[RMDB]
RNA sequence: GGGAACGACUCGAGUAGAGUCGAAAACAUGGUUCGCCAUGCUGGUUUCCUAAGUCAGCGAUGCACUCGCCAUACGACAUGAGCGUCGGAAACGACGCUCAACAGCGUAUGGACCCGAGUGGGCAGCUGAUAUGGACGGACGCUCGUUCGCGAGCAAUUACUGUAGACACUUCGGUGUCUACAGUAAAAAAGAAACAACAACAACAAC
Reactivity to 2A3 in 0.01 (KOAc 150mM, MgCl2 10mM, bicine 150mM(pH8.5), 24C), signal-to-noise 2, nucleotides 027 to 156: c010a000u010g050g000u070u080c210g010c030c010a030u040g030c070u090g180g010u050u100u000c010c030u020a120a030g010u000c000a000g010c030g100a180u140g100c000a000c000u000c000g000c010c000a000u000a000c040g120a120c040a090u040g000a000g000c000g000u000c010g000g000a040a070a040c000g000a000c000g000c000u010c000a000a020c010a000g030c000g000u000a000u030g000g030a030c050c050c010g000a020g030u020g000g030g040c070a010g000c000u000g000a020u010a010u060g010g020a030c080g120g050a030c100g020c010u000c000g070u120u150c220g010c030g150a000g000c000a000a040
Reactivity to DMS in 0.01 (KOAc 150mM, MgCl2 10mM, bicine 150mM(pH8.5), 24C), signal-to-noise 2, nucleotides 027 to 156: c060a040u000g010g010u000u000c290g040c000c000a050u000g000c030u000g040g040u010u010u000c000c010u020a120a250g010u000c010a010g020c000g050a240u020g010c020a060c000u000c040g000c000c010a030u000a020c000g010a090c090a300u020g000a020g020c000g010u000c010g020g010a130a100a300c020g020a030c010g000c000u000c000a000a020c070a180g000c020g000u000a030u000g000g000a020c190c090c130g010a040g070u000g010g020g000c060a300g000c010u000g000a000u000a150u010g010g000a100c050g000g010a090c080g000c020u000c010g000u000u000c260g010c020g000a060g000c020a130a260